[RMDB]
RNA sequence: GGGAACGACUCGAGUAGAGUCGAAAAGAUAUGGACGAUUCAAGGGAGCUUUUCGGAAACGAAGUGAGCUUUGAUCUUGGUCGUCCUAAGUCAAAGGAUUGCUACAUGUUCGCAUGUAGCAAUCCAACGAUGUUCUGAGGUUCGCCUCAGAACAUCGAAAAGAAACAACAACAACAAC
Reactivity to 2A3 in 0.01 (KOAc 150mM, MgCl2 10mM, bicine 150mM(pH8.5), 24C), signal-to-noise 3, nucleotides 027 to 126: g020a010u040a020u150g020g010a010c020g010a030u300u250c110a020a020g000g070g000a000g050c010u030u050u010u030c030g010g040a070a070a050c030g010a040a030g230u300g300a010g000c040u230u130u060g060a040u050c000u010u010g020g010u000c000g020u000c010c000u010a000a000g040u010c040a050a070a070g010g010a000u000u000g000c000u000a010c010a010u030g060u040u120c300g000c130a000u040g000u010a000g020c000a000a000u020c000c000a010a000
Reactivity to DMS in 0.01 (KOAc 150mM, MgCl2 10mM, bicine 150mM(pH8.5), 24C), signal-to-noise 2, nucleotides 027 to 126: g010a030u000a300u000g000g030a000c000g000a010u010u000c000a020a010g010g000g000a020g000c000u000u000u010u010c010g010g010a080a120a170c010g010a010a010g000u010g020a010g020c000u000u010u000g000a040u000c000u000u000g000g000u000c020g000u000c000c000u000a010a030g000u010c040a090a130a200g010g000a030u000u000g020c020u000a000c000a010u000g010u000u000c220g030c000a010u000g020u000a000g010c000a000a000u000c000c000a000a030